The data come from the RNA Mapping Database (RMDB), library OK3TST. Chemical mapping of a 207-nucleotide RNA with 2A3. The 2A3 profile rests on 653 reads.
[RMDB]
RNA sequence: GGGAACGACUCGAGUAGAGUCGAAAACAAACCUAAUGUGUACUGGAGAAAGUAUAACAUGACCAUGCAUUCAUACACAUAUGCAUGUGUAGAUGCUAAAUAAAUGCAUGUGUAGUAACUCACAUGCAAAAAUCCUAACCAUCAUAGGAACUGUGAACCGUUUUAUGCGGUUCGCCGCAUAAAACGGAAAAGAAACAACAACAACAAC
Reactivity to 2A3 in 0.01 (KOAc 150mM, MgCl2 10mM, bicine 150mM(pH8.5), 24C), signal-to-noise 2, nucleotides 027 to 156: c030a000a100a020c000c000u090a080a110u030g020u000g010u020a070c080u000g140g010a130g090a110a130a060g060u100a080u020a150a110c030a070u060g050a040c100c010a030u060g010c000a000u020u100c040a050u060a150c070a010c000a050u070a040u300g130c070a010u010g020u010g020u010a000g000a090u020g020c040u080a080a050a090u130a060a150a030u140g010c000a000u000g000u020g060u110a070g230u050a050a060c010u010c050a000c010a000u000g000c000a020a020a020a020a010u000c010c000u060a040a050c040c000a070u130c010a030u050a070g040g030a050a120c070u040g010u050g110a030a030

About this RNA: The reactions ran in a buffer of 150 mM KOAc, 10 mM MgCl2 and 150 mM bicine (pH 8.5), at 24 C.